The record gives the reactivity of an RNA of 177 nucleotides to 2A3 and DMS. For DMS, 1,596 sequencing reads were counted. The RNA was probed in 150 mM KOAc, 10 mM MgCl2 and 150 mM bicine (pH 8.5) at 24 C. The data come from the RNA Mapping Database (RMDB), library OK2TST. 2A3 adducts were read by reverse transcription with SuperScript II with manganese. Reactivities are given for positions 27 through 126.
[RMDB]
RNA sequence: GGGAACGACUCGAGUAGAGUCGAAAACGUCCAUCUUUCUCGUGGCGUAGGCCCUAAAGAUGUCUGCGGCGGUGACGGGGUCCUUGUUGCUACCCAGGAGCGUCUCGGCCACAAAGUCCAGCCUGUAGGCUGGCUUAACGUUCGCGUUAAGCCAGCCAAAAGAAACAACAACAACAAC
Reactivity to 2A3 in 0.01 (KOAc 150mM, MgCl2 10mM, bicine 150mM(pH8.5), 24C), signal-to-noise 1, nucleotides 027 to 126: c020g080u050c000c020a070u040c080u060u110u010c100u040c070g060u120g000g000c000g010u050a110g080g000c000c000c000u080a120a110a040g120a100u050g070u000c020u030g000c030g080g030c030g030g010u020g010a030c000g000g000g000g140u160c080c000u070u090g070u120u070g090c030u060a090c010c010c000a050g060g010a020g030c040g100u050c000u010c010g040g000c000c000a030c020a000a120a050g010u030c030c000a060g130c010c020u020g130u130a080
Reactivity to DMS in 0.01 (KOAc 150mM, MgCl2 10mM, bicine 150mM(pH8.5), 24C), signal-to-noise 1, nucleotides 027 to 126: c080g020u010c060c010a030u000c060u010u010u000c080u000c120g010u000g000g000c010g000u010a090g020g000c040c010c060u000a040a050a130g010a050u010g010u020c050u010g000c050g040g000c040g000g030u010g020a030c050g010g010g000g010u000c090c070u000u020g030u000u010g010c040u010a090c020c020c000a080g020g000a100g000c040g010u000c020u000c060g000g000c050c020a070c090a040a080a150g020u000c020c040a100g000c030c030u010g000u000a180